[RMDB]
RNA sequence: GGGAACGACUCGAGUAGAGUCGAAAAGAAACAGAGACGACACAAGAGCAUCGACGCCUGUGAAAACGGAGCAGACAUUACUCCGUAAAAUUAAGUAACAAAAUCCAAACCUUGCGGUACAAGAAAACCUAUAUAUCGUGUUCGCACGAUAUAUAGGAAAAGAAACAACAACAACAAC
Reactivity to DMS in 0.01 (KOAc 150mM, MgCl2 10mM, bicine 150mM(pH8.5), 24C), signal-to-noise 4, nucleotides 027 to 126: g010a050a140a090c110a060g000a160g000a050c040g010a120c100a090c060a060a150g000a110g030c070a060u000c030g000a090c070g000c050c000u000g010u010g000a050a050a050a030c010g000g000a010g010c190a040g020a140c260a070u020u030a200c020u000c010c010g020u030a030a020a090a100u020u040a060a090g000u020a040a040c090a090a060a070a080u010c010c030a020a060a120c050c030u000u010g000c070g010g020u020a020c090a040a060g010a090a050a080a150
Reactivity to 2A3 in 0.01 (KOAc 150mM, MgCl2 10mM, bicine 150mM(pH8.5), 24C), signal-to-noise 9, nucleotides 027 to 126: g050a010a040a010c040a010g050a000g040a080c040g020a010c020a000c020a120a070g020a010g040c020a040u060c030g030a030c050g030c000c000u040g000u030g100a060a060a000a000c010g010g000a000g000c070a010g110a170c040a080u110u210a040c010u000c000c010g010u010a030a020a000a000u210u110a090a020g070u050a060a040c040a060a070a020a030u030c030c010a040a020a050c030c010u020u040g010c060g030g020u060a060c040a070a030g080a040a070a010a020